[RMDB]
RNA sequence: GGGAACGACUCGAGUAGAGUCGAAAAGCUAGGGAAGCUUGGCCCCCUCACCCCCUUAGACAGCCCCCUGUGAGGUCUCUGAGGACCUGACAAGUCAGGGCUUGAGGGGCAGGCAGUUCAGGUGCAACUAUGGAGUCCCUUUCGAGGGACUCCAUAGAAAAGAAACAACAACAACAAC
Reactivity to DMS in 0.01 (KOAc 150mM, MgCl2 10mM, bicine 150mM(pH8.5), 24C), signal-to-noise 1, nucleotides 027 to 126: g000c030u000a130g010g010g000a150a120g010c000u000u000g020g000c180c020c000c000c010u000c010a040c050c030c010c000c010u010u000a140g000a040c240a130g000c020c000c010c120c060u000g020u000g000a000g000g010u000c000u000c220u010g020a130g040g000a010c000c000u000g000a040c000a000a070g010u000c200a100g000g010g010c020u000u000g000a030g000g000g010g040c090a010g010g010c020a070g000u000u000c080a170g080g000u000g010c060a090a220